RNA sequence: GGGAACGACUCGAGUAGAGUCGAAAAUCCCUAGUCUUCGGACUAGGGAAAAGCGACGCCUGCAGCGCGCGGUCGCGGAGGGCAGGCCUCGCGCACUCGGCAAAACUUCAUGCUUCGGCAUGAAGAACCUUAUUGCGAACUUCGGUUCGCAAUAAGGAAAAGAAACAACAACAACAAC
Reactivity to DMS in 0.01 (KOAc 150mM, MgCl2 10mM, bicine 150mM(pH8.5), 24C), signal-to-noise 2, nucleotides 027 to 126: u000c030c000c000u010a000g000u010c010u000u000c300g020g000a010c000u000a030g000g010g000a000a020a090a090g000c030g030a010c300g000c000c010u000g020c050a080g010c020g000c030g030c220g010g000u010c120g020c020g000g010a230g010g000g020c020a040g010g000c010c070u010c020g010c010g010c110a060c070u000c060g010g020c120a050a020a070a220c020u020u000c000a000u000g010c020u000u010c150g030g000c000a000u000g010a010a000g010a040a070
Reactivity to 2A3 in 0.01 (KOAc 150mM, MgCl2 10mM, bicine 150mM(pH8.5), 24C), signal-to-noise 2, nucleotides 027 to 126: u000c000c000c000u000a000g010u000c010u010u080c300g060g000a000c000u000a000g010g000g020a050a100a020a010g010c000g040a050c040g020c000c020u050g000c060a050g040c020g010c010g000c090g130g120u200c090g000c090g050g070a140g070g120g000c030a020g000g000c020c000u000c010g000c000g010c000a010c030u030c040g030g050c010a010a000a040a170c000u000u020c000a010u000g000c010u040u070c220g100g000c010a000u000g000a010a000g000a000a010
Source information
The record gives the reactivity of an RNA of 177 nucleotides to DMS and 2A3. DMS adducts were read by reverse transcription with MarathonRT. Values cover nucleotides 27 to 126. It was measured as part of the RMDB library M2PK50. 2A3 adducts were read by reverse transcription with SuperScript II with manganese. The 2A3 profile rests on 3,117 reads.